[RMDB]
RNA sequence: GGGAACGACUCGAGUAGAGUCGAAAAGCACGGCCAUGCGCAUGCGUGCGAACACUUGAGCGGAUCUACCAGAGCUCUUGUGGAUUAGGACGUUCUCGACGUAGUGCGCUAUCGAGUUCGUCCGAAAGGGUAGGUGCACCUUCGGGUGUACCUACCCAAAAGAAACAACAACAACAAC
Reactivity to DMS in 0.01 (KOAc 150mM, MgCl2 10mM, bicine 150mM(pH8.5), 24C), signal-to-noise 3, nucleotides 027 to 126: g040c020a010c000g020g000c080c090a040u040g030c110g010c030a080u020g010c000g000u000g030c030g010a140a110c020a030c010u010u020g000a020g010c020g000g010a040u020c140u020a200c100c050a190g010a210g030c000u000c000u000u000g000u000g000g000a170u030u040a060g000g000a040c000g020u000u000c000u000c000g000a090c280g020u050a090g030u030g020c080g000c070u000a150u010c000g000a000g000u000u000c020g010u010c020c000g010a020a100a100
Reactivity to 2A3 in 0.01 (KOAc 150mM, MgCl2 10mM, bicine 150mM(pH8.5), 24C), signal-to-noise 6, nucleotides 027 to 126: g020c010a010c040g030g030c080c030a180u280g010c080g020c070a020u160g070c000g010u020g000c030g000a050a020c010a010c010u010u020g000a000g000c020g020g160a150u070c040u170a120c060c040a030g020a010g080c010u000c000u000u010g020u010g030g010a060u030u210a040g010g000a010c000g000u020u020c000u000c000g010a030c070g030u050a050g100u070g120c080g010c070u050a050u040c000g000a010g010u000u020c000g010u000c010c000g010a030a010a010
The data come from the RNA Mapping Database (RMDB), library OK1LIB. Structure probing data (DMS and 2A3) for a 177-nucleotide construct. The RNA was probed in 150 mM KOAc, 10 mM MgCl2 and 150 mM bicine (pH 8.5) at 24 C.